[RMDB]
RNA sequence: GGGAACGACUCGAGUAGAGUCGAAAAGCAGUGCCACGCCCACCGCGUCUUCGGCAGCCGCUGCUCCGCCAACCGUUCAACCGGAACGCAAGGAGCAGAUCGAGAAGUUCUUCAAGGACGCCGUGCGUCAUUUCAUAAGAUUCGUCUUAUGAAAUGAAAAAGAAACAACAACAACAAC
Reactivity to 2A3 in 0.01 (KOAc 150mM, MgCl2 10mM, bicine 150mM(pH8.5), 24C), signal-to-noise 9, nucleotides 027 to 126: g000c020a020g030u020g070c040c040a080c070g040c020c030c000a020c010c020g010c010g060u020c040u050u030c000g020g000c020a030g100c040c040g020c020u000g000c000u010c000c010g030c030c020a060a070c020c010g060u210u230c080a140a110c120c030g100g010a040a020c040g000c080a120a180g010g000a000g000c000a000g010a040u060c020g000a010g010a110a010g020u020u020c000u150u140c050a050a040g060g010a020c030g010c040c070g090u120g040c020g040
Reactivity to DMS in 0.01 (KOAc 150mM, MgCl2 10mM, bicine 150mM(pH8.5), 24C), signal-to-noise 9, nucleotides 027 to 126: g010c050a050g010u000g010c040c050a100c120g010c050c080c020a060c050c070g010c040g010u000c080u000u000c050g020g010c050a110g020c110c120g010c010u000g000c000u000c010c010g010c080c090a060a290c130c010g000u000u010c200a140a130c250c070g000g000a030a160c170g000c060a100a100g020g000a020g010c010a010g000a070u000c020g000a050g000a060a240g000u000u000c020u000u010c080a090a110g000g000a050c030g010c020c120g010u000g010c070g010

This 177-nucleotide RNA was probed chemically with 2A3 and DMS.
Source: RMDB library OK2TRN, as collected in RNAgym.
Reactivities are given for positions 27 through 126.
For 2A3 the reverse transcriptase was SuperScript II with manganese.
For DMS, 51,772 sequencing reads were counted.
DMS adducts were read by reverse transcription with MarathonRT.
The 2A3 profile rests on 69,855 reads.
The RNA was probed in 150 mM KOAc, 10 mM MgCl2 and 150 mM bicine (pH 8.5) at 24 C.